An RNA of 177 nucleotides, treated with DMS and 2A3 and read out base by base. DMS adducts were read by reverse transcription with MarathonRT. For 2A3, 1,878 sequencing reads were counted. Reactivities are rounded to 0.1 and cut off at 0 and 3. The reactions ran in a buffer of 150 mM KOAc, 10 mM MgCl2 and 150 mM bicine (pH 8.5), at 24 C.

[RMDB]
RNA sequence: GGGAACGACUCGAGUAGAGUCGAAAAGAAGAGAAGUGAGUAAACGCCUAUACGGUAUAAGCACAGCCCGUCAAAAGGCGUGCGGCGAGGGCACCUGAAGCUGUGCUUAUAACUGGGCCGUCGAAGAACGGGCUGGAUUAUUCGUAAUCCAGCCCGUAAAAGAAACAACAACAACAAC
Reactivity to DMS in 0.01 (KOAc 150mM, MgCl2 10mM, bicine 150mM(pH8.5), 24C), signal-to-noise 3, nucleotides 027 to 126: g000a080a060g000a060g010a090a090g010u020g010a080g010u030a050a130a040c110g010c000c000u010a090u020a080c100g000g000u000a000u000a000a020g010c020a010c000a010g000c010c110c100g010u030c200a070a050a170a120g020g030c130g020u010g000c030g020g000c120g010a080g000g010g000c000a030c020c010u020g010a180a150g010c020u000g010u010g000c000u000u000a010u000a020a040c040u010g010g010g000c010c050g000u010c030g010a070a160g010a160
Reactivity to 2A3 in 0.01 (KOAc 150mM, MgCl2 10mM, bicine 150mM(pH8.5), 24C), signal-to-noise 3, nucleotides 027 to 126: g070a000a000g100a000g010a120a020g060u080g090a020g000u140a090a140a000c020g020c010c020u100a080u050a210c110g020g000u000a000u000a010a000g000c000a000c000a010g010c000c050c050g080u030c030a050a000a100a000g090g000c070g020u030g000c000g040g030c130g010a110g070g110g010c020a030c000c030u050g040a010a020g010c020u000g000u000g000c000u000u000a000u010a030a050c000u040g000g020g030c090c030g050u060c070g010a120a070g060a050